RNA sequence: GGGAACGACUCGAGUAGAGUCGAAAAGACGCCUUUAGAAGAAGAGGCUAGGGGGUAUUCCGGUGUGGGAUACUUAGUAAGAUGCAACGCUAAUUGCAUAAGAUUGUAGGACGGAAUUUACAGUCUUUAGAGAUAAGCACGUUCGCGUGCUUAUCAAUCAACGGUCCUUGUUCGCAAGGACCGUUGAAAAAGAAACAACAACAACAAC
Reactivity to 2A3 in 0.01 (KOAc 150mM, MgCl2 10mM, bicine 150mM(pH8.5), 24C), signal-to-noise 1, nucleotides 027 to 156: g100a020c110g000c000c000u010u080u080a260g010a260a010g020a050a000g000a070g050g000c040u050a070g160g030g000g000g020u080a050u010u040c000c050g020g160u230g070u180g050g020g000a030u030a030c000u000u020a040g040u140a100a000g000a030u030g000c010a010a000c010g000c180u070a050a040u160u010g010c000a020u040a060a080g030a030u050u050g020u040a000g030g040a040c140g060g060a050a050u000u020u160a040c010a010g000u000c000u000u050u050a080g040a000g000a040u000a000a000g020c010a000c010g010u040u050c290g000c000g110u000g000c000u000u000a000u010c000a000a000